[RMDB]
RNA sequence: GGGAACGACUCGAGUAGAGUCGAAAAUCUUCGUGAUCCUUCCAGUACUCUUCGAGGGGAAACCCGUCUUUUUCUGCACGGUAAGAGCCCAACAUGUAGAACUGAUUGACUGCCUUGUAGGGACAGCUCCACAUUAGAUUUUCGAAUCUAAUGUGGAAAAAGAAACAACAACAACAAC
Reactivity to 2A3 in 0.01 (KOAc 150mM, MgCl2 10mM, bicine 150mM(pH8.5), 24C), signal-to-noise 7, nucleotides 027 to 126: u010c000u070u060c070g070u120g040a090u060c010c010u040u020c040c000a040g020u040a080c020u010c010u070u040c030g020a050g010g010g010g040a020a040a040c010c010c010g030u020c020u050u180u020u050u040c080u060g000c060a010c040g040g000u050a110a050g050a080g160c010c010c000a010a020c020a050u090g080u150a030g020a100a030c040u030g040a160u090u120g050a060c020u010g040c000c010u050u060g080u120a060g020g000g050a040c010a020g050c020
Reactivity to DMS in 0.01 (KOAc 150mM, MgCl2 10mM, bicine 150mM(pH8.5), 24C), signal-to-noise 9, nucleotides 027 to 126: u010c020u000u010c100g010u010g010a080u000c040c030u000u000c050c040a090g010u010a070c040u000c020u000u000c030g010a300g010g010g000g000a060a160a140c140c010c020g010u010c010u000u000u010u000u000c080u000g010c110a020c050g000g000u010a090a080g020a160g010c030c020c020a060a170c170a050u000g000u010a030g010a050a080c120u010g000a100u000u000g010a100c040u000g010c020c020u000u010g010u000a070g010g010g000a050c060a060g010c190
Chemical mapping of a 177-nucleotide RNA with 2A3 and DMS. The DMS profile rests on 13,355 reads. For 2A3, 12,077 sequencing reads were counted. Source: RMDB library OK2TST, as collected in RNAgym. The reactions ran in a buffer of 150 mM KOAc, 10 mM MgCl2 and 150 mM bicine (pH 8.5), at 24 C.